[RMDB]
RNA sequence: GGGAACGACUCGAGUAGAGUCGAAAAUGUCCAGGCUUAGUUGUAGGCCUCCUAUUAGGCAACUAAUGGGCUAACAUUGGGUGAAUUGCAUGAAAGCUAAGGCGUAACGCUAUGCUAACCUGCAGCGCGUAGGCCUAUCCUUCGGGAUAGGCCUACGAAAAGAAACAACAACAACAAC
Reactivity to DMS in 0.01 (KOAc 150mM, MgCl2 10mM, bicine 150mM(pH8.5), 24C), signal-to-noise 2, nucleotides 027 to 126: u020g000u020c030c000a000g000g000c000u000u000a050g020u000u000g020u020a060g000g010c000c000u000c000c000u050a020u000u010a020g020g000c260a070a160c010u000a030a020u000g010g020g040c160u000a050a130c210a030u010u000g000g010g030u010g000a050a100u040u020g020c000a040u000g000a010a150a060g000c000u000a040a200g000g000c000g010u000a100a060c200g010c010u000a300u040g000c000u020a020a300c020c030u000g000c010a030g030c270g030
Reactivity to 2A3 in 0.01 (KOAc 150mM, MgCl2 10mM, bicine 150mM(pH8.5), 24C), signal-to-noise 1, nucleotides 027 to 126: u220g000u040c000c000a000g030g000c000u030u100a020g000u120u030g050u040a000g060g000c000c020u020c000c000u030a000u080u000a020g000g020c000a000a000c000u040a000a000u000g000g000g000c040u180a080a070c000a120u090u110g120g000g010u050g170a180a110u010u000g000c020a000u120g040a060a000a040g000c000u060a100a200g040g000c000g170u130a090a000c190g000c000u000a000u090g000c010u000a000a030c000c120u020g090c010a000g020c000g000